Notes:
Source: RMDB library M2RFPK, as collected in RNAgym. The record gives the reactivity of an RNA of 207 nucleotides to DMS and 2A3. Reactivities are given for positions 27 through 156. The reactions ran in a buffer of 150 mM KOAc, 10 mM MgCl2 and 150 mM bicine (pH 8.5), at 24 C. Reactivities are rounded to 0.1 and cut off at 0 and 3. The 2A3 profile rests on 3,430 reads.
RNA sequence: GGGAACGACUCGAGUAGAGUCGAAAACACAAUUCUCUAAGCGAUGAGAAGCGUGUGGAAAAUUAGGGAAGGGCUACGGCUAUAAUGCUAAGAAAGCUUAUCUACAAGCGGAGGUAUUCUCAGAACGAAAACCAUUUGGCGUUCGCGCCAAAUGGAACUGAUAUGAGUACUUCGGUACUCAUAUCAGAAAAGAAACAACAACAACAAC
Reactivity to DMS in 0.01 (KOAc 150mM, MgCl2 10mM, bicine 150mM(pH8.5), 24C), signal-to-noise 2, nucleotides 027 to 156: c040a030c020a040a260u000u000c010u020c010u010a090a170g010c170g000a160u020g000a060g010a060a040g040c300g040u000g070u000g000g010a040a060a120a130u020u000a080g010g010g010a060a080g010g040g030c000u000a080c080g030g000c000u020a080u010a110a060u000g020c030u000a050a140g020a090a070a070g010c040u000u000a070u000c080u000a150c060a090a100g020c020g030g000a090g020g000u010a050u000u000c020u000c030a140g000a080a110c060g000a070a110a050a100c000c000a020u000u000u010g000g000c000g060u000u040c300g020c040g010c000c000a010a020a000u010g010g010a010a050
Reactivity to 2A3 in 0.01 (KOAc 150mM, MgCl2 10mM, bicine 150mM(pH8.5), 24C), signal-to-noise 4, nucleotides 027 to 156: c030a000c000a050a080u040u010c000u000c010u060a200a150g110c080g120a110u120g010a060g010a030a020g020c060g010u020g000u070g010g010a070a110a050a120u160u130a080g000g020g030a030a020g020g020g000c000u050a030c060g000g000c000u020a030u080a300a060u160g010c020u040a090a010g050a080a070a000g070c010u040u080a060u100c040u110a080c040a120a030g020c020g050g020a020g040g030u050a080u130u040c070u010c030a050g060a130a030c080g060a050a040a050a080c000c000a000u000u000u010g000g000c000g020u020u080c240g000c010g000c050c000a000a000a000u000g000g000a000a000